[RMDB]
RNA sequence: GGGAACGACUCGAGUAGAGUCGAAAACAUUGAAACUGAUGCAUAACGUGUAUCGUACGUUAAUUAGUUCUUAUUAGGUGACGAUACAACCUUCUUAUAUCACGUUUAAUCGCAAUGUGACUGCGGCACGGUCAAGUGCCUUCGGGCACUUGACCGUAAAAGAAACAACAACAACAAC
Reactivity to DMS in 0.01 (KOAc 150mM, MgCl2 10mM, bicine 150mM(pH8.5), 24C), signal-to-noise 1, nucleotides 027 to 126: c090a040u000u010g000a060a030a030c020u000g000a010u000g030c120a030u000a020a030c180g000u010g020u000a020u000c000g000u000a000c000g000u020u010a030a020u000u000a050g000u000u010c230u030u020a040u000u000a030g010g010u010g000a020c000g010a020u000a000c000a040a120c120c090u010u000c110u000u000a010u000a050u000c000a010c240g030u000u000u000a110a080u030c140g010c060a050a010u000g010u000g000a240c100u000g000c170g000g010c220
Reactivity to 2A3 in 0.01 (KOAc 150mM, MgCl2 10mM, bicine 150mM(pH8.5), 24C), signal-to-noise 1, nucleotides 027 to 126: c010a020u020u260g090a000a000a000c010u000g030a000u060g000c030a040u080a070a020c060g030u040g000u010a030u040c030g030u000a060c020g050u060u000a000a070u020u190a060g140u170u190c120u190u120a070u030u080a000g120g020u130g170a000c000g000a020u020a000c030a070a090c030c000u060u170c040u070u120a080u000a000u060c000a000c180g000u050u080u090a110a060u080c020g020c140a040a130u040g030u040g080a030c050u050g000c050g020g000c010